Description
Source: RMDB library RNAMAK, as collected in RNAgym. Structure probing data (2A3) for a 207-nucleotide construct. Reactivities are given for positions 27 through 156. 2A3 adducts were read by reverse transcription with SuperScript II with manganese.
[RMDB]
RNA sequence: GGGAACGACUCGAGUAGAGUCGAAAACCCCGAUUCGUCGGGGAUUAAGAUAUGGAUCUGUCAUCUACGGCCGAGACUAUUGGUAUCGGAAACGAUACCAACGAAUCUCGGAACUACCGUAGGCAGAUCCUAAGUCCAAAGAAGGGUUCGCCCUUAAUCAGAUUUUUUUGUUCGCAAAAAAAUCUGAAAAAGAAACAACAACAACAAC
Reactivity to 2A3 in 0.01 (KOAc 150mM, MgCl2 10mM, bicine 150mM(pH8.5), 24C), signal-to-noise 1, nucleotides 027 to 156: c020c000c000c000g050a050u020u050c220g040u010c010g060g010g000g000a010u140u290a060a050g040a000u000a000u020g000g000a000u010c000u020g070u100c120a190u090c180u020a000c000g000g040c000c010g010a020g030a000c150u040a000u010u000g000g010u020a000u020c000g000g010a000a000a000c000g000a000u000a010c010c000a000a000c000g010a190a300u010c010u000c000g000g000a010a000c000u080a030c000c020g000u000a000g000g000c010a010g000a000u000c000c000u000a000a020g000u000c000c000a190a040a090g100a050a030g050g010g010u050u050c180g130c070c000c020u130u120a050a000